[RMDB]
RNA sequence: GGGAACGACUCGAGUAGAGUCGAAAAGAUAUGGAAGACAGACAUGCUCUACCCAUCGGAAACGAUGGAUGAGCAACAGCUGUGUUCCUAAGUCAAACGAAUGCUCGUCUUCGGACGAGCAUUCGAAUCCGGAUUAAUGGUUCGCCAUUAAUCCGGAAAAAGAAACAACAACAACAAC
Reactivity to DMS in 0.01 (KOAc 150mM, MgCl2 10mM, bicine 150mM(pH8.5), 24C), signal-to-noise 1, nucleotides 027 to 126: g000a030u010a300u000g000g000a030a010g000a030c010a030g010a060c110a210u010g010c000u000c000u030a170c100c000c000a000u000c010g000g010a080a090a180c020g030a010u000g000g010a010u000g000a000g050c000a000a060c240a150g000c000u000g030u000g010u000u000c000c000u020a020a100g010u000c050a080a070a300c010g000a020a000u000g000c010u000c000g030u000c010u000u030c180g010g040a010c000g000a000g000c000a000u010u010c000g000a040a110